RNA sequence: GGGAACGACUCGAGUAGAGUCGAAAAAGCGGGGGUGUCCGCCCAGCACUUGCUGCGUGGGAGGUGAAUUCCGGACGGACGCGUAUGGUCAGGUGUAGCAAUAUUAGUUCUUUGAGUCGGUACAUUCCAGGGCGCACGUUCCAGAGGGUAGCAAGGGGUACAUAGUUACAUUCGUGUGAUUGUGUACAAAAGAAACAACAACAACAAC
Reactivity to DMS in 0.01 (KOAc 150mM, MgCl2 10mM, bicine 150mM(pH8.5), 24C), signal-to-noise 3, nucleotides 027 to 156: a070g060c080g010g010g000g000g020u000g010u010c030c020g020c000c020c000a150g010c030a090c050u000u000g020c040u000g010c030g040u000g050g010g020a170g020g030u000g000a080a180u000u000c050c020g040g030a060c020g010g000a040c040g020c010g000u010a090u000g010g000u010c050a120g010g020u010g000u000a110g000c060a070a020u010a110u000u000a100g010u000u000c090u000u040u000g000a080g020u000c020g040g040u000a030c050a120u000u000c010c020a110g000g010g000c050g030c040a030c030g010u010u000c010c020a100g020a140g010g020g010u000a080g010c050a070a070g020g010g010
Reactivity to 2A3 in 0.01 (KOAc 150mM, MgCl2 10mM, bicine 150mM(pH8.5), 24C), signal-to-noise 2, nucleotides 027 to 156: a000g040c020g000g010g000g000g010u020g000u020c000c030g000c000c000c000a010g020c010a020c070u090u200g030c030u010g010c030g120u080g000g010g040a050g020g010u090g090a060a050u150u000c020c000g020g010a030c010g010g030a020c020g000c000g040u050a070u090g020g010u030c070a050g020g010u000g010u010a020g000c000a020a020u020a070u130u080a070g050u080u000c020u050u030u140g040a020g010u010c010g000g020u040a010c010a040u090u010c010c010a000g030g000g000c030g000c010a030c020g010u050u010c000c000a000g010a010g020g000g000u010a000g020c010a010a030g000g000g030
About this RNA:
An RNA of 207 nucleotides, treated with DMS and 2A3 and read out base by base. It was measured as part of the RMDB library OK3TST. The DMS profile rests on 9,302 reads. 2A3 adducts were read by reverse transcription with SuperScript II with manganese. As a SHAPE reagent, 2A3 marks flexible, mostly unpaired nucleotides at the ribose 2'-OH. The 2A3 profile rests on 2,069 reads.